[RMDB]
RNA sequence: GGGAACGACUCGAGUAGAGUCGAAAAUCGACAGCGCCGAUCUGUCGCUGCCAUGGGGUCAGGAUGCGCUGAUCGCCGCAGUCGCGUCCGCCAACGCGAAUACCGUUGUGGUGCUUGAGACGGGCAAACCUUGCAUUCCCUUCGGGGAAUGCAAGGUAAAAGAAACAACAACAACAAC
Reactivity to 2A3 in 0.01 (KOAc 150mM, MgCl2 10mM, bicine 150mM(pH8.5), 24C), signal-to-noise 2, nucleotides 027 to 126: u040c000g030a000c040a020g010c030g040c010c020g040a020u020c020u110g170u270c020g000c020u100g060c020c000a150u130g040g000g050g100u130c070a090g030g020a040u100g000c010g020c020u020g040a060u050c000g000c030c000g000c020a000g050u070c060g000c030g020u000c010c040g010c020c000a010a020c050g000c000g050a140a030u100a120c040c050g000u000u090g130u090g030g000u040g020c090u230u020g050a140g000a120c010g000g000g050c120a090a020